[RMDB]
RNA sequence: GGGAACGACUCGAGUAGAGUCGAAAAACCAGAGCAGCAUUUCCAAAAUGGGAUCCCAGUUCACUGACAUCAGAACCACCUGGAGGGCUGGUUUAUAAUGCAGAUUUCCUGGCCCCUGCGUGCUUGGAUUGACAUGAGUAUUCGUACUCAUGUCAAUAAAAGAAACAACAACAACAAC
Reactivity to 2A3 in 0.01 (KOAc 150mM, MgCl2 10mM, bicine 150mM(pH8.5), 24C), signal-to-noise 4, nucleotides 027 to 126: a000c040c000a030g020a020g050c010a000g000c020a080u080u090u010c030c030a020a050a090a220u130g040g000g000a040u070c010c000c000a000g020u070u050c050a020c060u050g130a190c010a030u070c030a020g020a040a030c010c000a030c030c030u140g090g160a180g090g090g000c090u030g010g030u030u050u010a190u030a040a060u070g000c010a010g110a240u040u040u060c010c010u000g040g000c000c000c010c000u020g020c030g040u030g030c000u030u040g020g030
Reactivity to DMS in 0.01 (KOAc 150mM, MgCl2 10mM, bicine 150mM(pH8.5), 24C), signal-to-noise 9, nucleotides 027 to 126: a130c010c010a070g000a060g020c020a070g010c020a120u000u000u010c040c040a060a060a110a100u000g010g000g000a070u010c200c010c010a060g000u000u000c110a060c030u000g000a110c040a030u000c090a110g000a040a050c030c020a040c040c010u000g020g010a130g020g000g010c300u000g000g000u000u000u000a050u010a060a030u000g000c030a020g000a140u000u000u000c190c000u000g000g010c190c010c010c030u000g010c060g000u000g010c020u010u000g010g000